This 207-nucleotide RNA was probed chemically with 2A3.
[RMDB]
RNA sequence: GGGAACGACUCGAGUAGAGUCGAAAACGGCAUAAAAGCAAACUUGACCACCAAGGAUAAAAGAGAUCUUAUCCAAGGAUGCAAAAGAUAAUCUCACUUUUGACACCCACUGAUCUCGAACUUAAAGAAAACCGAGACUACUUCGGUAGUCUCGGAACUAUCCCGUCGAGUUCGCUCGACGGGAUAGAAAAGAAACAACAACAACAAC
Reactivity to 2A3 in 0.01 (KOAc 150mM, MgCl2 10mM, bicine 150mM(pH8.5), 24C), signal-to-noise 1, nucleotides 027 to 156: c040g110g000c000a010u160a130a130a070a020g020c090a120a070a200c060u110u110g090a110c000c030a010c020c030a060a060g010g020a040u030a110a080a090a030g000a000g000a010u020c000u010u060a000u110c100c080a060a050g030g000a030u060g050c020a010a010a010a010g050a070u160a180a260u110c220u120c110a050c040u000u000u000u050g060a060c000a010c050c010c000a020c030u070g000a010u000c000u000c010g010a090a080c060u110u160a030a000a150g060a000a120a010a000c000c000g000a000g020a000c000u000a000c000u100u120c170g000g010u000a000g010u030c000u000c000g000g000a000a000
The RNA was probed in 150 mM KOAc, 10 mM MgCl2 and 150 mM bicine (pH 8.5) at 24 C. For 2A3, 516 sequencing reads were counted.